[RMDB]
RNA sequence: GGGAACGACUCGAGUAGAGUCGAAAAUGGACUUUUUACAGUUCCUACUUAUCCGGUUUUAACGCUGUGUUAUUGGCGCAAAGGUUUACGGAUAAACAACUAAUAAUUAAACCUUUUGUGUGCGAAAAUUGGACGUUUAGGUUCGCCUAAACGUCAAUACUUGGUAAGUCUUCGGACUUACCAAGUAAAAAGAAACAACAACAACAAC
Reactivity to 2A3 in 0.01 (KOAc 150mM, MgCl2 10mM, bicine 150mM(pH8.5), 24C), signal-to-noise 3, nucleotides 027 to 156: u140g020g010a050c040u090u100u080u120u210a100c130a060g000u090u070c040c010u030a100c030u040u050a010u000c000c000g000g000u000u010u000u070a060a040c060g000c040u050g010u010g110u300u170a210u140u250g030g000c010g000c010a050a000a000g010g000u000u010u000a000c010g000g010a000u000a010a150a000c020a040a000c050u110a040a090u120a180a020u170u170a020a020a010c000c000u000u050u130u060g090u000g020u050g030c100g080a070a020a050a110u120u070g080g000a010c000g000u010u000u000a010g000g020u030u010c120g090c010c010u010a000a000a000c000g000u000c000a000a000
Reactivity to DMS in 0.01 (KOAc 150mM, MgCl2 10mM, bicine 150mM(pH8.5), 24C), signal-to-noise 2, nucleotides 027 to 156: u010g020g000a050c040u010u000u000u040u000a050c080a130g000u010u000c000c030u010a160c120u010u000a040u000c000c000g020g010u010u000u010u010a200a060c020g000c020u010g040u020g010u000u010a130u000u010g010g010c000g030c000a010a050a010g060g030u000u000u000a160c010g000g000a070u000a050a050a210c040a070a230c130u000a090a140u000a110a230u010u000a010a020a000c010c000u000u000u000u000g040u010g040u000g040c030g000a040a040a060a180u000u000g030g000a000c000g020u000u000u010a000g030g020u000u020c300g080c020c020u020a010a000a010c000g010u000c010a010a020
An RNA of 207 nucleotides, treated with 2A3 and DMS and read out base by base. For 2A3, 1,322 sequencing reads were counted. For DMS, 3,641 sequencing reads were counted. DMS adducts were read by reverse transcription with MarathonRT. The reactions ran in a buffer of 150 mM KOAc, 10 mM MgCl2 and 150 mM bicine (pH 8.5), at 24 C.